RNA sequence: GGGAACGACUCGAGUAGAGUCGAAAAGAAAGAAAGAAGGAGGUCUAUCAGAGCAAACUUCCUCGGGUCGUUGGGGUUCCUUCGAAAAGACAACGGCACGAGGAUGUUGCUUAUGAUGCAUUUCCAAAUUCUGGGCAUAUUUCGAUAUGCCCAGAAUAAAAGAAACAACAACAACAAC
Reactivity to DMS in 0.01 (KOAc 150mM, MgCl2 10mM, bicine 150mM(pH8.5), 24C), signal-to-noise 2, nucleotides 027 to 126: g010a130a100a080g000a070a050a060g010a110a120g000g000a050g000g000u010c020u010a000u010c000a020g010a020g010c000a020a020a040c020u010u010c000c000u000c000g010g010g020u000c000g010u000u000g010g010g000g010u000u000c040c050u000u000c100g000a080a080a090a130g020a050c000a010a010c000g000g000c000a030c000g000a000g000g000a010u000g000u010u000g010c000u000u000a030u000g000a030u000g000c210a030u000u000u000c000c010a060a120
Reactivity to 2A3 in 0.01 (KOAc 150mM, MgCl2 10mM, bicine 150mM(pH8.5), 24C), signal-to-noise 5, nucleotides 027 to 126: g110a000a070a000g110a040a080a000g110a080a060g010g000a010g010g010u010c010u080a010u000c000a000g010a000g010c030a040a070a160c000u010u000c000c000u000c000g010g000g000u010c000g020u010u030g030g000g030g050u080u150c030c000u110u100c070g080a080a110a000a020g080a050c010a010a000c000g000g000c010a000c000g000a000g000g000a000u000g000u000u000g000c000u030u050a240u170g000a000u020g000c020a010u020u010u000c000c000a000a110
Structure probing data (DMS and 2A3) for a 177-nucleotide construct. For 2A3, 5,930 sequencing reads were counted. The RNA was probed in 150 mM KOAc, 10 mM MgCl2 and 150 mM bicine (pH 8.5) at 24 C. Reactivities are rounded to 0.1 and cut off at 0 and 3. It was measured as part of the RMDB libraries RFM100 and RFMREP.